[RMDB]
RNA sequence: GGGAACGACUCGAGUAGAGUCGAAAAGCCCCACCCCUCCCGCCCGAGGCACGCGAUCACUCGGGCGGGUGAACAUCACCGGCUCAGCUGGAUUCUCGAACCCCCGACACCUCUACGCUCAGCGCACCAUUAUGGUAGUCUUCGGACUACCAUAAUGAAAAGAAACAACAACAACAAC
Reactivity to DMS in 0.01 (KOAc 150mM, MgCl2 10mM, bicine 150mM(pH8.5), 24C), signal-to-noise 1, nucleotides 027 to 126: g010c070c020c000c160a240c020c020c050c010u000c000c000c010g010c010c000c010g000a010g010g020c170a050c050g010c050g010a100u010c050a100c000u000c020g010g000g000c010g000g000g010u000g000a060a050c160a110u010c050a100c070c010g000g010c060u010c080a100g040c050u000g010g010a160u000u020c020u020c010g020a130a210c040c020c000c020c000g010a140c130a060c030c020u000c020u000a070c030g000c010u000c040a040g030c040g010c080a080c140